[RMDB]
Description:
Source: RMDB library OK3TST, as collected in RNAgym. This 207-nucleotide RNA was probed chemically with DMS and 2A3.
RNA sequence: GGGAACGACUCGAGUAGAGUCGAAAAGUAUAUGAAUCAUGAAGUUCCUCAGGACCUCCCGUGUCGAUUCAUUGACCCCCUGCUCUCGCAGGUGGCACGAGUCCCUAUGAUUGGACUAGCUUCAUGAUGAGACCAUUUGAACUAGUCAAACAAGGAACUACCAGAUAAAUUUCGAUUUAUCUGGUAGAAAAGAAACAACAACAACAAC
Reactivity to DMS in 0.01 (KOAc 150mM, MgCl2 10mM, bicine 150mM(pH8.5), 24C), signal-to-noise 3, nucleotides 027 to 156: g020u000a110u000a060u000g010a090a030u000c020a150u000g000a100a100g020u000u000c020c020u000c110a130g030g000a070c040c010u000c000c040c060g000u000g030u000c030g000a110u000u000c020a100u010u010g000a300c050c010c030c000c010u010g020c030u010c170u010c190g030c020a030g000g010u010g010g000c040a100c050g000a100g020u000c010c020c010u020a160u010g000a180u010u000g010g010a070c060u000a030g010c050u000u000c040a050u000g010a090u000g010a240g020a300c110c030a080u010u000u010g020a040a060c010u000a050g000u000c010a050a060a050c020a090a100g000g000a110a130
Reactivity to 2A3 in 0.01 (KOAc 150mM, MgCl2 10mM, bicine 150mM(pH8.5), 24C), signal-to-noise 5, nucleotides 027 to 156: g080u060a070u060a030u280g080a050a010u060c040a040u050g040a050a040g070u100u040c020c000u040c060a040g040g040a050c020c050u090c050c060c030g020u030g010u020c060g040a070u110u060c050a080u150u200g120a230c000c000c010c000c000u010g000c010u070c010u010c180g000c000a010g000g010u050g050g000c020a000c050g020a010g010u030c040c000c020u130a100u190g090a180u100u150g030g010a000c020u010a010g020c030u010u010c000a020u020g030a030u040g010a050g040a070c050c020a040u100u040u090g030a040a020c030u040a020g050u020c040a060a060a050c060a080a020g070g100a030a060
The 2A3 profile rests on 2,999 reads. The DMS profile rests on 7,329 reads. The reactions ran in a buffer of 150 mM KOAc, 10 mM MgCl2 and 150 mM bicine (pH 8.5), at 24 C.